[RMDB]
RNA sequence: GGGAACGACUCGAGUAGAGUCGAAAAUUGGCAAAUAAGUGACGUUUGAAGAGAUUCAGGUGUGCUGGGAGGGUUCAUUCAGGAUGGAACUGGCUACUCUUCAUUAUAAAAAAGUCAAGACAGCGUAAAGUAACCCUGAAAGAAGAUGCUUUGCCUGCAUUAUCCGGUAGUUCGCUACCGGAUAAUGAAAAGAAACAACAACAACAAC
Reactivity to 2A3 in 0.01 (KOAc 150mM, MgCl2 10mM, bicine 150mM(pH8.5), 24C), signal-to-noise 3, nucleotides 027 to 156: u080u050g030g010c060a090a020a050u140a240a070g070u040g080a020c040g020u030u090u080g030a040a010g030a020g010a080u040u100c050a020g070g000u050g050u070g020c030u030g020g030g030a090g040g010g040u020u040c020a020u060u060c050a020g060g020a040u110g020g040a050a030c020u000g010g010c020u040a040c030u060c000u040u040c010a060u030u110a050u140a070a030a000a020a010a010g030u050c050a080a010g010a030c000a000g020c080g070u030a030a020a030g010u000a010a050c000c000c000u030g020a020a040a030g040a000a000g020a020u020g000c010u000u020u020g020c000c010u000g030
Reactivity to DMS in 0.01 (KOAc 150mM, MgCl2 10mM, bicine 150mM(pH8.5), 24C), signal-to-noise 2, nucleotides 027 to 156: u000u010g030g010c030a060a120a130u000a060a110g030u000g000a070c060g010u000u000u000g010a070a060g010a080g020a160u000u000c070a070g040g030u000g040u000g010c010u000g000g040g000a150g010g030g020u000u000c040a130u000u010c020a070g020g010a100u000g000g000a050a050c030u000g020g010c020u000a050c030u000c030u010u010c010a090u010u020a180u050a020a060a030a080a050a080g010u010c040a070a070g030a090c050a030g000c010g010u010a070a030a050g000u000a130a080c020c000c000u000g010a080a030a300g010a070a080g010a140u000g010c010u000u000u000g010c060c060u000g010